[RMDB]
RNA sequence: GGGAACGACUCGAGUAGAGUCGAAAAAGGGUCUGCGUCCAGUACUCCCGCUCGUCGACAAUGCCUAGCUCCGUCUGCGCCUGGGUACCAGUGGGACGCUCAUACGUGUGCCCGUGCAGGGUAACUCUCGUUGCUAGUUUUUCGAAACUAGCAACGAAAAAGAAACAACAACAACAAC
Reactivity to DMS in 0.01 (KOAc 150mM, MgCl2 10mM, bicine 150mM(pH8.5), 24C), signal-to-noise 3, nucleotides 027 to 126: a120g000g020g010u010c040u000g010c080g000u000c020c100a120g000u000a090c090u000c030c020c010g040c070u000c090g020u010c130g000a060c080a060a100u010g020c040c050u000a080g010c060u010c060c040g010u000c020u000g000c050g030c090c060u000g020g000g020u000a030c030c070a090g010u000g000g000g000a060c040g020c020u010c120a060u000a070c140g000u000g010u000g000c000c000c010g000u020g000c110a130g020g000g000u000a050a080c050u010c030
Reactivity to 2A3 in 0.01 (KOAc 150mM, MgCl2 10mM, bicine 150mM(pH8.5), 24C), signal-to-noise 1, nucleotides 027 to 126: a000g070g000g030u050c030u070g000c000g010u000c000c000a030g020u000a070c010u050c000c010c000g010c000u030c010g040u020c030g040a020c040a120a070u100g070c010c030u050a030g010c010u010c060c030g100u030c010u040g010c030g020c020c010u090g030g020g000u080a090c020c000a040g030u110g030g020g040a020c030g070c040u010c020a170u180a050c120g040u100g010u050g080c000c000c010g000u040g000c030a050g010g000g060u030a050a050c020u070c010